[RMDB]
RNA sequence: GGGAACGACUCGAGUAGAGUCGAAAAACUAACAGAAACCAAGACCACUCACCAUCAUCAGAACCCAGCACUCCCACCUCAGCCAGUCCUGGAUACCCCAACACAUCCGAAAAGCUAGACCUGAAUUUAAAAACAUAUCUCAUGAUGAUGGUAGAGAGUCACUGGUAGGAUUCGUCCUACCAGUGACAAAAGAAACAACAACAACAAC
Reactivity to 2A3 in 0.01 (KOAc 150mM, MgCl2 10mM, bicine 150mM(pH8.5), 24C), signal-to-noise 2, nucleotides 027 to 156: a000c050u110a070a000c010a040g110a080a040a060c030c020a060a040g070a070c000c030a030c040u010c000a020c000c000a000u000c000a000u010c000a000g020a020a070c010c000c010a020g110c030a020c020u050c030c000c000a030c050c000u020c000a000g000c000c030a000g000u030c000c010u010g000g000a050u090a080c040c000c000c000a020a020c040a000c000a050u110c050c000g020a060a050a100a000g040c030u020a020g010a030c000c000u000g010a040a040u080u190u280a050a080a020a000a000c030a000u170a010u100c040u000c010a020u020g000a010u000g000a000u000g010g020u150a020g000a000g020a030